[RMDB]
RNA sequence: GGGAACGACUCGAGUAGAGUCGAAAAAGCGUGCAGCUGCUAUAAGGCAUGCUCGUGGGUCCUCAAAUGACUGAGCCUACUGUGUAAUACAUGCAGCAUACAGAUAUGUGUUCGUUGACCAUAUCAGUAAAGUUCUGGUCAACAGUAGGCUAUUAGAAUAGUACGGAUCGUUCGCGAUCCGUACUAUAAAAGAAACAACAACAACAAC
Reactivity to 2A3 in 0.01 (KOAc 150mM, MgCl2 10mM, bicine 150mM(pH8.5), 24C), signal-to-noise 1, nucleotides 027 to 156: a000g000c000g050u010g050c000a080g030c050u100g000c000u020a020u200a300a070g130g000c020a120u030g000c000u000c020g060u110g000g080g020u010c000c020u210c070a160a160a090u300g100a060c060u130g080a000g010c000c000u000a000c000u090g060u010g000u300a050a050u030a060c030a000u030g020c000a000g080c070a000u050a250c060a000g070a070u070a000u060g140u000g030u020u040c100g050u150u170g000a000c000c000a000u030a010u040c000a010g100u100a000a260a000g080u150u100c030u000g020g030u070c150a050a000c000a000g050u000a060g000g070c050u000a000u030u040a000g020a000
Chemical mapping of a 207-nucleotide RNA with 2A3. The RNA was probed in 150 mM KOAc, 10 mM MgCl2 and 150 mM bicine (pH 8.5) at 24 C. For 2A3 the reverse transcriptase was SuperScript II with manganese. Source: RMDB library OK3TST, as collected in RNAgym.